[RMDB]
RNA sequence: GGGAACGACUCGAGUAGAGUCGAAAAGGAAGGUUGGAGGGACGUUCUGGUGAUCCCUGGCGCGAAUCUUCUGCGAAUGGCCUUCGGGGUCAUCGGCACUCAAAUUGUGAGAUAUCGCAAGUUUGAGAGGUCCUCUUACAUUCGUGUAAGAGGACCUAAAAGAAACAACAACAACAAC
Reactivity to 2A3 in 0.01 (KOAc 150mM, MgCl2 10mM, bicine 150mM(pH8.5), 24C), signal-to-noise 2, nucleotides 027 to 126: g030g030a040a060g030g000u040u070g000g060a020g040g020g000a010c010g030u070u040c080u110g090g000u000g010a060u030c030c000c000u010g090g040c120g000c010g010a030a060u070c060u160u040c060u180g040c000g050a130a080u070g040g000c020c030u060u070c130g060g000g000g110u010c000a010u000c000g010g000c080a020c050u020c010a040a000a020u030u010g000u000g020a150g000a180u160a110u270c020g010c040a030a070g060u000u010u000g040a050g000
Reactivity to DMS in 0.01 (KOAc 150mM, MgCl2 10mM, bicine 150mM(pH8.5), 24C), signal-to-noise 2, nucleotides 027 to 126: g000g000a020a000g010g020u030u000g000g010a050g020g010g010a100c090g010u000u010c130u020g020g010u010g010a080u000c000c000c000u010g010g030c090g000c080g010a050a100u000c060u000u010c110u010g010c080g000a030a060u000g010g010c000c000u010u010c280g020g000g020g020u000c010a020u000c000g020g020c160a290c000u000c000a000a030a020u000u000g020u000g050a060g020a180u000a060u000c030g000c000a010a030g010u010u000u000g010a000g000
Chemical mapping of a 177-nucleotide RNA with 2A3 and DMS. It was measured as part of the RMDB library OK2TST. Conditions: 150 mM KOAc, 10 mM MgCl2 and 150 mM bicine (pH 8.5), 24 C. For DMS the reverse transcriptase was MarathonRT.